[RMDB]
RNA sequence: GGGAACGACUCGAGUAGAGUCGAAAAAAGCUCAUUUUCGAAUGAGCUUGAAGCGUGAACGCAGGAUAACGCAGAAACGCGCCGCAGAACCUCCCAAGCGAAAGAUUAAGGUCUUCGGACCUUAAAAUGGGAUAGCCUAAUUCGUUAGGCUAUCCCAAAAAGAAACAACAACAACAAC
Reactivity to DMS in 0.01 (KOAc 150mM, MgCl2 10mM, bicine 150mM(pH8.5), 24C), signal-to-noise 1, nucleotides 027 to 126: a000a010g030c000u010c000a000u000u030u010u000c070g010a030a030u000g000a010g000c010u000u000g000a030a090g010c040g020u000g000a190a130c140g000c040a050g030g000a150u010a090a150c110g030c030a050g010a140a180a080c050g000c030g000c150c050g030c030a060g010a110a090c070c000u020c000c000c000a100a190g000c110g000a120a040a070g010a130u000u000a010a000g000g010u000c000u000u000c250g020g000a010c000c000u010u000a000a010a060a050
The record gives the reactivity of an RNA of 177 nucleotides to DMS. It was measured as part of the RMDB library M2PK50. For DMS the reverse transcriptase was MarathonRT.